Source information:
The record gives the reactivity of an RNA of 177 nucleotides to 2A3 and DMS. Values cover nucleotides 27 to 126.
RNA sequence: GGGAACGACUCGAGUAGAGUCGAAAAAUAAGACCUUUAGUUAGUGAUGGAGGAGCCCCUUCACUGGCAACCCUGGGCAGGGUAAACAAAGGAAACUGCUUGAAUAAGCCCAGGUUUCUCCAUGUUAACCGUAAAUACCAUUCGUGGUAUUUACGGUAAAAGAAACAACAACAACAAC
Reactivity to 2A3 in 0.01 (KOAc 150mM, MgCl2 10mM, bicine 150mM(pH8.5), 24C), signal-to-noise 1, nucleotides 027 to 126: a000u130a020a030g100a080c000c000u000u110u060a060g020u000u010a030g010u030g120a030u040g000g080a060g060g040a020g050c080c000c000c000u010u010c060a040c040u000g010g000c040a030a040c010c000c020u050g090g140g000c060a020g060g000g060u070a090a080a010c110a080a060a010g070g000a030a080a070c080u120g000c020u040u010g050a080a050u110a110a000g000c000c010c000a000g030g000u020u040u000c030u060c010c010a030u110g070u070u100a040
Reactivity to DMS in 0.01 (KOAc 150mM, MgCl2 10mM, bicine 150mM(pH8.5), 24C), signal-to-noise 3, nucleotides 027 to 126: a120u000a050a050g020a130c020c030u010u000u000a170g010u000u000a030g000u010g000a030u010g000g000a090g000g000a100g020c090c050c050c040u000u000c030a030c040u000g010g020c070a110a080c100c020c000u010g010g010g040c080a110g020g010g020u010a060a080a110c120a010a040a050g000g010a100a060a080c060u010g020c070u000u000g000a090a140u010a070a150g010c020c080c060a080g000g000u000u010u000c020u000c040c070a110u020g000u000u000a060
For DMS the reverse transcriptase was MarathonRT.
Source: RMDB library OK2TST, as collected in RNAgym.
The reactions ran in a buffer of 150 mM KOAc, 10 mM MgCl2 and 150 mM bicine (pH 8.5), at 24 C.